Source information: Chemical mapping of a 177-nucleotide RNA with DMS and 2A3. Source: RMDB library OK2TST, as collected in RNAgym. DMS adducts were read by reverse transcription with MarathonRT. For DMS, 949 sequencing reads were counted.
RNA sequence: GGGAACGACUCGAGUAGAGUCGAAAAGAGCUGGCGAUAGCGGACAAGAUCACGAUUGGCCAUGUCCAGUGCUGCCUUGCUGCUGUCAGCCUUGGCCUCAGCAGUCUGCAAAGCAAGCUUGUAGCGAUAUCCUCGGAUGCUUCGGCAUCCGAGGAUAAAAAGAAACAACAACAACAAC
Reactivity to DMS in 0.01 (KOAc 150mM, MgCl2 10mM, bicine 150mM(pH8.5), 24C), signal-to-noise 1, nucleotides 027 to 126: g000a140g000c000u010g000g010c000g000a120u010a030g000c030g010g000a080c010a080a040g000a150u000c140a100c140g000a120u010u000g030g040c010c140a170u000g010u010c010c000a060g010u010g000c060u020g000c300c040u000u010g060c050u000g020c020u010g010u000c090a080g010c030c010u030u020g030g000c000c010u000c080a090g030c150a070g000u000c080u010g010c060a040a080a260g010c040a050a060g010c060u000u000g030u000a120g030c060g020a220
Reactivity to 2A3 in 0.01 (KOAc 150mM, MgCl2 10mM, bicine 150mM(pH8.5), 24C), signal-to-noise 1, nucleotides 027 to 126: g070a010g050c060u050g020g020c010g080a110u060a130g020c010g010g000a010c010a070a050g030a080u100c010a020c170g100a130u010u110g000g000c040c170a190u160g050u000c050c010a050g000u020g060c040u070g000c050c020u080u030g000c040u080g020c050u010g000u020c000a020g030c020c000u040u030g020g030c040c070u030c010a020g000c000a010g050u080c010u040g000c010a010a040a120g030c030a020a000g040c060u120u030g050u110a000g020c040g050a000